[RMDB]
RNA sequence: GGGAACGACUCGAGUAGAGUCGAAAACUCUGUUGACGAAAUGUGUACUAACCGCGCUCUAAGCAUUAGUGUGAGGAGAGACGCGCAGCGUGAAUCCCGUGGUAAUUCUUUAGCUAAGCGUAGUGCCCACUUCUUUUCCAUUCGUGGAAAAGAAGUGAAAAGAAACAACAACAACAAC
Reactivity to 2A3 in 0.01 (KOAc 150mM, MgCl2 10mM, bicine 150mM(pH8.5), 24C), signal-to-noise 3, nucleotides 027 to 126: c030u000c050u070g130u120u170g060a070c060g070a100a090a090u130g060u030g010u050a040c010u030a060a090c030c030g020c020g000c040u030c020u080a020a030g020c020a040u040u050a130g290u020g040u030g060a180g010g020a030g000a000g050a030c010g020c020g010c070a080g020c000g050u050g040a040a070u000c010c000c020g020u050g030g000u030a070a100u100u020c030u090u070u080a020g000c050u070a120a050g020c010g080u030a010g020u000g020c040c020
Reactivity to DMS in 0.01 (KOAc 150mM, MgCl2 10mM, bicine 150mM(pH8.5), 24C), signal-to-noise 5, nucleotides 027 to 126: c020u000c030u010g010u000u000g020a110c100g010a070a090a070u010g020u000g010u000a050c090u000a080a090c120c050g010c050g000c030u000c040u000a030a180g000c080a060u000u000a050g020u000g020u000g000a230g010g010a050g020a220g000a060c050g030c020g010c150a040g010c020g030u010g010a100a210u000c030c010c030g010u000g010g020u000a030a080u000u000c020u000u010u000a060g000c080u010a060a090g010c060g020u000a040g000u000g000c030c060

An RNA of 177 nucleotides, treated with 2A3 and DMS and read out base by base. Source: RMDB library OK2TRN, as collected in RNAgym. 2A3 adducts were read by reverse transcription with SuperScript II with manganese.